RNA sequence: GGGAACGACUCGAGUAGAGUCGAAAAGUACACCCUCCCUCCCUCGCAAAAGCGCGCAAAUAAAGGGAGGGACUCAGGGAUGAGUAGGCCAAAAGGCCAUAUCCCGAAGACGCGCGACGGGACAAAACUUCCGUUAUCGUUUCGACGAUAACGGAAGAAAAGAAACAACAACAACAAC
Reactivity to DMS in 0.01 (KOAc 150mM, MgCl2 10mM, bicine 150mM(pH8.5), 24C), signal-to-noise 1, nucleotides 027 to 126: g040u020a100c200a110c000c000c000u020c000c020c000u000c000c000c000u000c080g030c210a110a020a060a190g010c010g000c010g020c080a130a050a120u000a080a030a010g000g060g010a000g020g000g020a000c030u000c120a170g030g020g000a100u000g010a020g000u000a290g040g000c010c010a080a030a110a150g000g000c000c000a020u000a050u000c000c040c050g020a030a210g000a080c160g000c010g060c060g000a260c010g000g000g040a080c150a020a040a110a040
Reactivity to 2A3 in 0.01 (KOAc 150mM, MgCl2 10mM, bicine 150mM(pH8.5), 24C), signal-to-noise 1, nucleotides 027 to 126: g080u140a100c030a220c080c000c000u030c020c000c000u000c020c050c000u020c040g070c030a110a120a030a060g060c020g030c010g040c040a000a020a050u200a030a100a000g010g000g000a010g000g000g000a000c000u010c060a010g000g000g000a050u060g010a020g140u270a150g050g000c010c000a030a300a110a210g030g000c030c000a060u030a010u060c000c000c000g000a020a040g050a030c020g000c000g000c000g030a000c020g000g030g000a010c030a060a100a040a070
The record gives the reactivity of an RNA of 177 nucleotides to DMS and 2A3. High DMS reactivity at an A or C suggests that its Watson-Crick edge is free. Values cover nucleotides 27 to 126. For 2A3, 1,275 sequencing reads were counted. DMS adducts were read by reverse transcription with MarathonRT. The data come from the RNA Mapping Database (RMDB), library M2PK90.